[RMDB]
About this RNA: Conditions: 150 mM KOAc, 10 mM MgCl2 and 150 mM bicine (pH 8.5), 24 C. Structure probing data (2A3 and DMS) for a 177-nucleotide construct. The DMS profile rests on 7,964 reads.
RNA sequence: GGGAACGACUCGAGUAGAGUCGAAAAGAUAUGGACGUUGAACUACAAUCGAGAAUUGGUGUCCGAAGAACUGCUUCGGAAACGAAGCAGGGAGGACACUGAUUCUCGAUUGCAACGUCCUAAGUCAGACAAUAUGGUAGUUCGCUACCAUAUUGUCAAAAGAAACAACAACAACAAC
Reactivity to 2A3 in 0.01 (KOAc 150mM, MgCl2 10mM, bicine 150mM(pH8.5), 24C), signal-to-noise 4, nucleotides 027 to 126: g070a040u120a070u190g000g000a010c010g010u030u000g040a130a100c120u230a080c300a000a000u010c000g000a010g010a000a020u020u010g000g000u010g000u000c010c010g090a230a040g010a020a020c000u010g000c010u000u000c010g050g000a100a060a070c020g000a000a000g000c000a000g000g000g010a010g000g000a000c000a000c000u010g000a000u000u000c000u000c000g000a000u000u000g000c000a000a000c000g000u000c000c000u000a000a000g020u000c030a030
Reactivity to DMS in 0.01 (KOAc 150mM, MgCl2 10mM, bicine 150mM(pH8.5), 24C), signal-to-noise 5, nucleotides 027 to 126: g010a040u000a300u000g010g010a020c010g020u000u000g010a120a070c100u020a300c010a000a000u000c000g010a010g010a020a010u000u000g010g010u010g000u000c010c000g000a120a190g000a110a200c000u000g010c010u000u000c010g010g000a100a100a180c010g010a010a010g020c000a010g010g000g000a070g010g000a020c000a010c000u000g000a000u000u000c000u000c000g000a000u000u000g000c000a010a010c000g000u000c000c000u000a000a070g020u000c050a200